[RMDB]
RNA sequence: GGGAACGACUCGAGUAGAGUCGAAAAUGGAGAUAUUGGAGUUGAAAAUGCAUCACCUAAAGCUAUAAUAAGUGCUUUAAAUUCUGCAAAGUGUAAUGUUAAAAUAAAAAGAGAAGAGUUUUCAAUACAAGAUAUGAUGGUAUAUGGAUUAAGUGGACCUAUCACCUGAGUUCGCUCAGGUGAUAGGAAAAGAAACAACAACAACAAC
Reactivity to 2A3 in 0.01 (KOAc 150mM, MgCl2 10mM, bicine 150mM(pH8.5), 24C), signal-to-noise 2, nucleotides 027 to 156: u130g050g000a030g000a000u060a040u150u050g040g000a070g020u110u120g090a100a000a030a000u070g050c060a030u060c010a070c000c060u040a060a000a030g000c050u040a010u030a300a100u050a300a000g030u060g030c000u000u040u040a090a130a130u230u130c090u070g060c030a050a070a090g000u040g000u060a010a060u050g000u070u120a020a140a050a000u140a030a060a030a030a000g020a000g010a180a030g040a000g020u020u080u000u060c030a020a000u040a080c010a010a020g010a020u040a040u190g010a000u000g050g000u040a070u010a000u130g050g050a010u120u120a030a070g000u010g020g020a000